The record gives the reactivity of an RNA of 170 nucleotides to DMS and 2A3. The RNA was probed in 150 mM KOAc, 10 mM MgCl2 and 150 mM bicine (pH 8.5) at 24 C. The data come from the RNA Mapping Database (RMDB), library 15KLIB.

RNA sequence: GGGAACGACUCGAGUAGAGUCGAAAAGCAGUUAACAAUCGAAGUCUUAGUGACUGUCGAUGGUGUAAAUUUUAGAACAGUCGUUCUAAAUAAUAAGAACACUUAUAGAUCACAGCUUGGAUGCGUUAGAGACUCCUGUUCGCAGGAGUCAAAAGAAACAACAACAACAAC
Reactivity to DMS in 0.01 (KOAc 150mM, MgCl2 10mM, bicine 150mM(pH8.5), 24C), signal-to-noise 8, nucleotides 027 to 129: g040c100a070g000u000u010a050a040c060a190a040u000c040g000a070a010g030u020c030u040u080a060g020u000g000a050c010u000g040u000c140g000a070u010g010g000u030g020u010a050a080a100u050u010u000u000a020g000a020a010c040a240g050u100c150g020u000u030c000u000a000a000a000u020a060a110u010a070a090g040a150a010c030a010c010u000u000a080u020a100g020a080u000c050a040c030a000g030c020u010u000g050g030a040u030g030c070g010u030u020a050g020a170
Reactivity to 2A3 in 0.01 (KOAc 150mM, MgCl2 10mM, bicine 150mM(pH8.5), 24C), signal-to-noise 9, nucleotides 027 to 129: g080c050a030g030u070u100a040a020c010a020a020u000c040g080a010a000g120u020c030u150u230a070g020u060g090a020c020u060g140u090c070g060a070u090g000g030u030g000u010a100a120a100u020u030u000u010a010g000a010a010c010a070g300u220c100g000u100u000c000u000a010a010a010u150a030a030u140a090a050g130a150a010c010a000c020u070u050a080u080a150g050a040u040c010a000c000a010g010c010u030u030g030g000a020u070g040c040g060u030u040a030g010a000